[RMDB]
RNA sequence: GGGAACGACUCGAGUAGAGUCGAAAACGGUGAUGACGGAACGCAGGCUCGCGAGGGACGCGACCAGCGCGCGCUUGGCGUCGUGAUACAUGCUGCAGUACUGACUCACCGCGUCCCCCAUGGCCUCCAUGUCACCCCCAUUCGUGGGGGUGACAUGAAAAGAAACAACAACAACAAC
Reactivity to DMS in 0.01 (KOAc 150mM, MgCl2 10mM, bicine 150mM(pH8.5), 24C), signal-to-noise 2, nucleotides 027 to 126: c050g000g020u000g010a050u010g020a270c100g000g000a040a160c150g010c040a080g010g010c040u000c050g010c030g000a180g010g020g000a050c040g030c000g000a090c090c090a090g010c120g000c030g020c060g000c040u000u000g020g020c040g010u010c040g000u020g030a080u030a060c180a080u020g030c010u000g030c060a120g020u000a120c040u030g000a300c200u000c030a060c010c020g020c000g000u000c020c030c010c100c090a070u030g000g000c060c040u030c090
Reactivity to 2A3 in 0.01 (KOAc 150mM, MgCl2 10mM, bicine 150mM(pH8.5), 24C), signal-to-noise 2, nucleotides 027 to 126: c020g030g020u050g000a090u070g030a010c050g030g040a150a020c030g060c050a010g050g060c000u010c070g040c050g050a050g030g060g030a040c000g010c030g110a080c010c030a080g070c030g050c000g000c010g030c190u100u220g130g030c040g090u020c010g000u060g000a040u060a140c010a040u160g090c020u040g010c000a030g040u090a050c010u040g070a020c010u030c050a020c000c030g000c030g010u010c000c000c020c000c000a050u080g050g000c010c020u070c020
The record gives the reactivity of an RNA of 177 nucleotides to DMS and 2A3. Reactivities are given for positions 27 through 126. 2A3 adducts were read by reverse transcription with SuperScript II with manganese. Conditions: 150 mM KOAc, 10 mM MgCl2 and 150 mM bicine (pH 8.5), 24 C.